This 170-nucleotide RNA was probed chemically with DMS and 2A3.

[RMDB]
RNA sequence: GGGAACGACUCGAGUAGAGUCGAAAAUGCUUAAUAAGGGUAUGCAACUUUUGCAUACAAAGGUCUCCUGGGCUGGUUCUAAAAUCAUUGCUGUUAUCUACAGCGGCAGGGAGUCUCUAAUAUUCCCCGACCUGUUGGUUCGCCAACAGGAAAAGAAACAACAACAACAAC
Reactivity to DMS in 0.01 (KOAc 150mM, MgCl2 10mM, bicine 150mM(pH8.5), 24C), signal-to-noise 9, nucleotides 027 to 129: u000g000c080u000u030a050a070u060a070a070g060g000g030u020a000u000g010c000a020a120c250u030u060u040u010g030c020a030u010a050c020a050a080a060g020g010u020c010u020c010c000u020g030g030g040c060u010g030g010u000u010c170u020a060a040a050a040u020c070a080u010u050g000c000u000g020u010u030a100u070c150u020a060c040a010g000c020g020g040c000a300g000g000g000a040g030u030c020u010c060u000a070a080u050a160u010u000c020c000c010c140g000a130
Reactivity to 2A3 in 0.01 (KOAc 150mM, MgCl2 10mM, bicine 150mM(pH8.5), 24C), signal-to-noise 9, nucleotides 027 to 129: u070g000c020u100u080a070a010u160a140a130g160g040g010u000a010u010g000c000a070a100c120u130u200u250u070g000c000a010u000a010c000a020a040a010g030g000u010c010u010c020c010u030g010g180g000c010u030g040g020u130u050c100u190a080a110a050a080u080c050a080u120u140g010c010u010g020u100u080a130u120c070u080a020c010a030g000c000g010g000c010a020g000g010g000a010g020u000c030u000c010u060a070a150u070a070u110u010c000c000c000c000g020a030
For DMS the reverse transcriptase was MarathonRT. The data come from the RNA Mapping Database (RMDB), library 15KLIB. The RNA was probed in 150 mM KOAc, 10 mM MgCl2 and 150 mM bicine (pH 8.5) at 24 C. 2A3 adducts were read by reverse transcription with SuperScript II with manganese. Values are in units of 0.01, from 0 to 300, in steps of 10. The DMS profile rests on 51,012 reads.